[RMDB]
RNA sequence: GGGAACGACUCGAGUAGAGUCGAAAAUCAUCUUGGAACUGACAGUGACAAAUGUGUGAUUACAGAGGAGACACACCUUGAAGAAACAACAGAGAGCCAACAGAAUGGUGAAGAAGGCACGUCUACUCCUGAGGACAAGGAGAGUGGGCAGGAGGGGCAAUAGAGCCAUAUUCGUAUGGCUCUAUUGAAAAGAAACAACAACAACAAC
Reactivity to 2A3 in 0.01 (KOAc 150mM, MgCl2 10mM, bicine 150mM(pH8.5), 24C), signal-to-noise 6, nucleotides 027 to 156: u060c020a010u020c020u060u060g040g030a040a060c030u050g050a030c050a080g030u020g050a030c050a050a110a080u070g030u000g030u030g040a060u050u080a060c040a050g040a020g070g040a030g030a020c020a000c000a020c040c000u050u080g020a080a040g040a070a110a020c050a020a010c040a040g060a000g000a010g080c020c010a030a020c020a050g130a150a050u090g020g000u040g020a030a020g030a010a020g030g000c040a010c060g020u010c010u040a080c010u030c020c010u030g020a050g020g040a020c010a060a010g020g010a030g010a020g020u090g000g020g000c010a000g000g020a010g010g000g000g000
Reactivity to DMS in 0.01 (KOAc 150mM, MgCl2 10mM, bicine 150mM(pH8.5), 24C), signal-to-noise 4, nucleotides 027 to 156: u010c040a060u010c050u010u010g010g010a110a080c050u010g020a140c070a130g020u000g020a140c070a060a060a050u000g030u000g020u000g010a120u010u000a180c050a140g010a090g020g020a120g020a150c070a060c100a050c030c020u000u020g020a070a080g000a100a080a070c060a050a080c040a090g000a130g010a140g000c010c010a010a130c080a120g000a070a110u000g010g010u000g010a030a100g020a050a050g030g000c040a070c090g020u000c030u000a080c020u000c020c020u000g010a070g000g010a100c060a110a090g000g000a060g020a080g030u000g010g020g020c030a060g000g010a050g010g020g020g010
Structure probing data (2A3 and DMS) for a 207-nucleotide construct. For 2A3, 7,366 sequencing reads were counted. The RNA was probed in 150 mM KOAc, 10 mM MgCl2 and 150 mM bicine (pH 8.5) at 24 C.